[RMDB]
RNA sequence: GGGAACGACUCGAGUAGAGUCGAAAAGUUAUGCUCUCGCUGCCUAAUGGCGGUGCGGGAAACCCACUCUAAAGUCCUUAGGGUUAGCCCCUUAAGGCGGGGUUCGGAGGCACCUGGCAAAAGAAGCUGAAACUGUGCACAUUCGUGUGCACAGUAACGUAAAGAUUUGAUUCGUCAAAUCUUUACGAAAAGAAACAACAACAACAAC
Reactivity to 2A3 in 0.01 (KOAc 150mM, MgCl2 10mM, bicine 150mM(pH8.5), 24C), signal-to-noise 6, nucleotides 027 to 156: g060u100u110a110u290g040c010u000c000u000c020g020c010u020g000c000c010u290a300a190u280g010g000c040g020g060u030g000c030g000g000g000a060a030a030c030c030c010a070c040u160c070u170a140a120a270g300u020c000c000u000u000a010g010g000g020u050u070a050g030c000c010c000c020u000u040a000a010g000g000c000g010g000g000g000u020u160c100g080g030a020g040g000c000a010c000c010u020g200g000c000a020a030a000a050g000a010a000g000c010u020g000a080a010a010c000u000g000u000g010c000a000c000a010u060u110c170g090u060g000u000g010c000a000c010a000g000u000a000a030
Reactivity to DMS in 0.01 (KOAc 150mM, MgCl2 10mM, bicine 150mM(pH8.5), 24C), signal-to-noise 2, nucleotides 027 to 156: g010u000u000a070u010g030c010u000c020u000c030g050c010u000g020c020c010u000a120a130u000g020g010c010g020g050u010g000c090g020g010g020a050a060a100c000c010c050a150c080u000c080u000a090a090a110g010u020c040c000u000u000a040g010g000g020u010u000a260g010c140c300c000c010u000u000a030a030g020g100c010g000g010g000g010u000u000c030g000g010a290g000g010c000a080c010c010u010g010g020c050a050a110a090a230g000a070a140g040c000u020g020a130a070a080c010u010g020u000g000c000a010c000a120u010u010c250g000u000g030u000g010c010a000c000a000g000u000a000a090